[RMDB]
Notes
The record gives the reactivity of an RNA of 177 nucleotides to 2A3 and DMS.
RNA sequence: GGGAACGACUCGAGUAGAGUCGAAAAGAUAUGGAUCACCAUGGACAUGAUUGUCGUAUCGGAAACGAUACGCAAUCAACAGCCAUUGUGAUCCUAAGUCAAACCGGUCAAGUUCGCUUGACCGGAAGACAUGGACACACUUCGGUGUGUCCAUGUCAAAAGAAACAACAACAACAAC
Reactivity to 2A3 in 0.01 (KOAc 150mM, MgCl2 10mM, bicine 150mM(pH8.5), 24C), signal-to-noise 1, nucleotides 027 to 126: g000a000u020a020u060g000g000a000u000c000a000c000c000a000u020g000g000a050c130a300u300g000a030u030u010g090u300c060g000u020a010u030c010g000g040a000a010a040c010g000a000u000a000c000g000c000a000a010u000c000a070a080c110a010g070c000c040a000u000u000g020u000g000a020u000c000c000u000a030a000g010u000c050a060a050a130c000c000g000g000u000c020a020a000g030u050u210c300g030c210u000u000g000a020c000c000g000g010a000a030
Reactivity to DMS in 0.01 (KOAc 150mM, MgCl2 10mM, bicine 150mM(pH8.5), 24C), signal-to-noise 1, nucleotides 027 to 126: g010a080u000a150u010g000g010a040u000c010a010c010c100a210u010g000g000a060c180a230u010g000a010u000u000g020u040c030g040u000a010u000c000g000g000a040a040a160c010g010a000u000a000c000g010c000a000a000u000c010a050a050c300a130g000c030c020a000u010u010g010u000g050a080u000c000c000u000a010a010g000u000c020a080a140a190c020c000g000g010u010c020a000a010g020u000u000c190g000c000u000u010g010a000c010c000g000g000a010a010
Source: RMDB library TTRDES, as collected in RNAgym.